[RMDB]
RNA sequence: GGGAACGACUCGAGUAGAGUCGAAAAGAGCAGGAAGCCGACCGAGCGCUGAAGGCCGGGGCCAAGGUGAUUGGCGUUAACGCCCGCGACCUCAUGACGCUGGACGUGGACCGGGAUUGCUUCGCGCCUUUUCCACUCCAUUCGUGGAGUGGAAAAGAAAAGAAACAACAACAACAAC
Reactivity to DMS in 0.01 (KOAc 150mM, MgCl2 10mM, bicine 150mM(pH8.5), 24C), signal-to-noise 2, nucleotides 027 to 126: g020a110g020c020a090g000g000a080a170g040c030c020g020a130c040c010g020a080g030c000g010c040u000g020a170a040g000g000c000c010g020g000g030g000c010c010a030a050g000g040u020g000a220u000u010g010g010c000g040u000u010a080a120c200g000c030c010c030g000c050g000a100c040c050u000c050a070u000g020a100c040g010c050u000g030g010a070c090g050u000g000g010a220c050c020g010g000g020a130u000u000g020c030u000u000c040g000c100g010c110
Reactivity to 2A3 in 0.01 (KOAc 150mM, MgCl2 10mM, bicine 150mM(pH8.5), 24C), signal-to-noise 1, nucleotides 027 to 126: g050a020g020c030a000g000g100a090a010g040c000c030g030a050c000c010g110a010g000c040g000c060u060g020a080a020g040g020c020c020g000g020g000g000c010c000a010a010g150g030u240g100a240u070u030g060g000c030g020u140u070a080a030c050g060c030c000c010g070c010g040a150c000c020u010c030a090u130g060a070c020g000c020u060g000g030a030c020g000u080g060g020a060c060c010g030g000g040a130u120u150g020c020u030u060c050g000c000g000c030